[RMDB]
RNA sequence: GGGAACGACUCGAGUAGAGUCGAAAAACUUUAUCCUUGUCUGGAGUUAAUGAGAUCAGAAUAAAAUCAAGUAAACACUCCCAGAGUUCAGUGCUUUGCAGGCUAUGGUGAUACAGGAGUGCACCAGAAAGAAAUCACAUUGUCAUACAAGACAGAAAAUCCGCGGUAUAUUCGUAUACCGCGGAUUAAAAGAAACAACAACAACAAC
Reactivity to 2A3 in 0.01 (KOAc 150mM, MgCl2 10mM, bicine 150mM(pH8.5), 24C), signal-to-noise 1, nucleotides 027 to 156: a000c110u300u290u100a090u200c110c000u030u200g140u050c000u000g000g000a020g050u170u220a300a110u180g000a090g010a090u050c050a050g100a030a060u000a050a000a000a050u070c050a180a000g000u000a050a000a100c050a000c070u090c020c020c020a120g160a000g090u040u060c020a010g040u000g070c000u130u090u140g000c090a010g040g070c000u030a160u090g050g000u000g050a050u140a160c050a020g100g000a140g140u090g020c050a000c010c010a000g160a200a000a000g000a000a030a000u180c000a000c000a040u050u020g300u200c020a050u270a300c270a000a230g050a000c020a000g080a120a290
Annotation
An RNA of 207 nucleotides, treated with 2A3 and read out base by base. Reactivities are given for positions 27 through 156. The reactions ran in a buffer of 150 mM KOAc, 10 mM MgCl2 and 150 mM bicine (pH 8.5), at 24 C.